Chemical mapping of a 207-nucleotide RNA with 2A3 and DMS. The DMS profile rests on 2,427 reads.
RNA sequence: GGGAACGACUCGAGUAGAGUCGAAAACGUACAUUCGUGUACGCUACCUACCUUUGUGCAUAUGAGUAUAUAUUUGUCAGUACUUCCCAUUGGGAAGGAUACUUGGAUUUAAUAUAAAAAAUAUGCACUCUGGUUCGACACCAUGUUCGCAUGGUAACAAAUGUUGGGAGUUCGCUCCCAACAUUUGAAAAGAAACAACAACAACAAC
Reactivity to 2A3 in 0.01 (KOAc 150mM, MgCl2 10mM, bicine 150mM(pH8.5), 24C), signal-to-noise 3, nucleotides 027 to 156: c000g030u010a000c000a010u020u110c240g080u110g000u020a020c000g030c030u040a100c000c000u010a020c000c010u000u000u000g000u000g010c000a000u010a010u010g010a040g060u020a000u000a000u000a000u010u000u000g020u000c010a010g030u020a020c000u000u010c030c000c120a300u170u300g000g000g000a000a020g010g020a030u040a020c010u080u180g060g010a050u300u300u290a000a000u010a000u000a040a020a010a000a000a000u020a000u010g000c000a000c000u000c000u000g000g020u030u200c070g050a020c000a000c080c050a000u070g010u080u110c200g030c170a000u000g020g020u060a030a010
Reactivity to DMS in 0.01 (KOAc 150mM, MgCl2 10mM, bicine 150mM(pH8.5), 24C), signal-to-noise 1, nucleotides 027 to 156: c020g000u010a010c020a050u000u010c280g010u010g020u000a000c010g000c020u010a110c020c010u000a020c000c010u010u010u000g000u020g040c000a000u020a000u000g000a150g050u000a100u010a020u010a010u010u000u000g000u000c020a230g000u000a060c000u000u040c000c000c010a300u000u010g050g000g000a010a010g000g010a160u000a000c140u020u010g000g000a060u000u000u010a010a010u010a010u030a000a000a130a150a190a020u000a030u000g010c010a010c010u000c030u000g010g010u000u000c030g010a240c020a070c000c010a060u000g020u010u000c210g020c010a050u010g010g040u000a100a180
Record summary:
High 2A3 reactivity points to a flexible backbone, as in loops and unpaired stretches. Reactivities are given for positions 27 through 156.